[RMDB]
RNA sequence: GGGAACGACUCGAGUAGAGUCGAAAAUGCCAUCAAUAUGGGUGCCGCGGAGGAGUCCACGGCAUUCAGGUUGGCUAAGGAGGGAUGAACCGGGCCAGGGGUGAAAACCAGCAGCCAAGAGUUCCCGUGGUAAGCAGUAGUGGGAUAGCGUACCGGACGAAUAGAAUACGUUCGCGUAUUCUAUUCGAAAAGAAACAACAACAACAAC
Reactivity to DMS in 0.01 (KOAc 150mM, MgCl2 10mM, bicine 150mM(pH8.5), 24C), signal-to-noise 2, nucleotides 027 to 156: u000g020c010c020a080u000c060a110a160u010a080u030g000g050g050u000g000c000c010g050c030g030g040a080g020g030a270g010u000c010c020a010c030g000g000c000a020u000u000c000a030g000g020u010u000g010g010c000u010a050a120g080g000a080g000g000g010a060u010g010a060a110c010c000g020g020g010c070c070a160g000g000g010g030u000g000a110a030a090a080c030c010a050g020c050a160g000c040c030a070a050g000a220g030u000u000c000c000c000g000u000g010g010u010a050a070g050c050a080g000u020a120g030u000g010g000g010a090u010a050g000c010g050u000a120c020c010g020g000a300
Reactivity to 2A3 in 0.01 (KOAc 150mM, MgCl2 10mM, bicine 150mM(pH8.5), 24C), signal-to-noise 3, nucleotides 027 to 156: u100g000c010c000a020u030c020a050a200u130a110u280g010g010g010u000g000c000c000g000c020g000g040a050g100g030a080g210u050c000c010a010c000g000g000c000a000u000u010c000a010g020g000u030u010g010g000c010u020a040a050g060g010a030g010g040g010a030u070g030a070a040c030c040g020g010g010c030c040a060g000g020g000g000u030g010a030a030a010a030c010c000a000g050c020a010g030c030c020a050a040g050a000g070u030u030c030c000c000g000u010g010g000u050a040a040g000c030a050g010u210a010g060u120g010g030g000a040u060a030g030c040g010u040a060c040c030g010g030a030